[RMDB]
RNA sequence: GGGAACGACUCGAGUAGAGUCGAAAAACGAGAGAGUGAGUGUGUGAGUGUGAGAUCACGAACUCUCGAGUACACGUGUGUGAGAGUUCGAUCGUUCGAUCGUUCUCGUACGAGUACUCGUGAGUACACGAGAUCUCUCUCGAGAGAACGUACACACUGCACUACUGUAUUUCGAUACAGUAGUGCAAAAAGAAACAACAACAACAAC
Reactivity to DMS in 0.01 (KOAc 150mM, MgCl2 10mM, bicine 150mM(pH8.5), 24C), signal-to-noise 2, nucleotides 027 to 156: a120c050g020a110g020a060g010a070g040u000g080a270g020u000g040u000g030u010g040a080g040u010g020u020g000a180g000a070u000c020a110c040g020a120a090c000u000c000u000c000g030a110g030u000a000c070a080c130g000u020g030u000g020u000g020a040g000a040g030u000u010c000g010a010u000c020g000u000u000c170g000a040u000c050g010u000u000c000u000c030g020u020a040c040g050a120g000u000a040c000u000c010g010u000g020a060g030u000a120c050a070c020g010a290g010a240u000c000u000c000u000c000u040c050g000a030g000a170g010a070a080c030g000u000a180c060a070c040a130c070
Reactivity to 2A3 in 0.01 (KOAc 150mM, MgCl2 10mM, bicine 150mM(pH8.5), 24C), signal-to-noise 5, nucleotides 027 to 156: a010c030g000a010g020a010g000a020g010u060g000a010g010u030g020u020g010u010g020a070g020u110g030u070g110a130g040a130u110c000a000c020g020a060a020c010u010c000u000c000g000a000g000u010a000c040a000c020g020u040g010u030g000u100g110a050g010a000g040u070u100c000g000a000u000c020g130u300u200c230g000a000u000c000g000u000u000c000u000c000g010u030a000c010g000a020g000u000a000c000u000c000g000u010g000a000g000u040a030c020a000c020g030a050g010a070u050c000u010c000u000c000u000c000g000a010g000a000g010a060a030c070g110u280a050c090a000c070a020c140
Background
An RNA of 207 nucleotides, treated with DMS and 2A3 and read out base by base. The DMS profile rests on 2,973 reads. It was measured as part of the RMDB library OK3TST. The 2A3 profile rests on 4,212 reads. Values cover nucleotides 27 to 156.